The record gives the reactivity of an RNA of 177 nucleotides to DMS and 2A3. 2A3 adducts were read by reverse transcription with SuperScript II with manganese. The 2A3 profile rests on 2,490 reads. The DMS profile rests on 17,391 reads. The RNA was probed in 150 mM KOAc, 10 mM MgCl2 and 150 mM bicine (pH 8.5) at 24 C. For DMS the reverse transcriptase was MarathonRT.
[RMDB]
RNA sequence: GGGAACGACUCGAGUAGAGUCGAAAAGGCAGGAAUAGAAUGGGCCGAAUCUAGUGUGACACUGCAGGCCAAAUGCUAUUUUUGUUUGGCGCAAGGCCUGGUGGCUGAGGCGGCUGUGUUCUCCAAGCAAUAUUAUAUAUUUCGAUAUAUAAUAUUGAAAAGAAACAACAACAACAAC
Reactivity to DMS in 0.01 (KOAc 150mM, MgCl2 10mM, bicine 150mM(pH8.5), 24C), signal-to-noise 5, nucleotides 027 to 126: g000g020c050a060g000g010a110a070u020a050g000a070a050u000g010g000g000c020c000g010a070a090u030c020u010a030g000u020g010u020g000a080c030a000c000u000g010c010a010g010g000c000c000a000a020a030u000g000c010u000a000u000u000u010u010u040g000u010u010u000g010g010c000g020c060a060a300g000g000c010c000u000g010g020u010g010g000c020u000g000a090g010g000c030g000g000c020u000g010u020g010u000u000c010u000c040c050a130a170g010
Reactivity to 2A3 in 0.01 (KOAc 150mM, MgCl2 10mM, bicine 150mM(pH8.5), 24C), signal-to-noise 2, nucleotides 027 to 126: g050g010c020a010g000g030a050a040u070a070g050a040a050u080g020g020g010c010c010g010a000a020u050c020u020a010g030u050g030u040g090a000c010a000c020u070g010c010a010g000g010c010c000a000a020a000u000g000c000u010a050u040u060u020u080u100g210u020u090u140g010g000c000g000c050a040a010g000g000c000c000u000g000g010u030g000g000c000u010g000a010g020g040c010g010g010c000u060g070u010g000u070u010c070u000c000c000a050a000g030